This 207-nucleotide RNA was probed chemically with DMS and 2A3. Conditions: 150 mM KOAc, 10 mM MgCl2 and 150 mM bicine (pH 8.5), 24 C. The data come from the RNA Mapping Database (RMDB), library M2RFPK.
RNA sequence: GGGAACGACUCGAGUAGAGUCGAAAAUGAAGCAAAUCCCUAAUUGCCAAUGAUGAGCAAUUCGCUAUUGCCGCCUAAAAACGGUUAGCCGGGGCUGCUAGAGCCUUGUUACCAAAGAUAGCCGGCGUUACGGCAUGAUGGUUCGCCAUCAUGCCAAUGCUUAGAUCCUAUUCGUAGGAUCUAAGCAAAAAGAAACAACAACAACAAC
Reactivity to DMS in 0.01 (KOAc 150mM, MgCl2 10mM, bicine 150mM(pH8.5), 24C), signal-to-noise 3, nucleotides 027 to 156: u000g000a130a150g000c060a070a080a100u000c010c000c000u010a040a070u000u020g010c000c000a130a140u010g010a180u000g010a130g020c010a040a010u000u000c060g020c000u000a120u010u010g020c000c000g020c040c020u010a070a060a120a100a070c060g040g020u000u010a010g010c010c050g050g020g040g020c030u020g030c080u000a080g010a090g000c000c010u000u000g020u000u000a160c070c050a060a080a120g000a110u000a080g000c030c100g020g010c050g030u000u000a090c100g000g000c000a010u000g000a030u020g000g030u010u000c290g050c040c000a000u000c000a010u000g000c000c000a010a020
Reactivity to 2A3 in 0.01 (KOAc 150mM, MgCl2 10mM, bicine 150mM(pH8.5), 24C), signal-to-noise 4, nucleotides 027 to 156: u140g020a060a040g040c050a040a030a140u030c000c000c000u020a010a070u020u010g000c000c010a100a140u220g110a130u080g010a150g020c010a000a020u050u070c050g000c040u060a060u060u200g010c020c000g010c020c020u070a070a050a030a000a000c020g010g010u030u070a010g010c040c060g040g000g010g000c010u040g060c070u100a050g020a010g260c010c010u000u030g020u040u060a010c010c030a090a040a010g090a040u030a010g040c030c000g030g000c000g030u050u090a040c080g000g010c000a000u010g000a000u030g000g030u060u030c130g040c070c000a000u000c000a000u000g000c000c000a000a020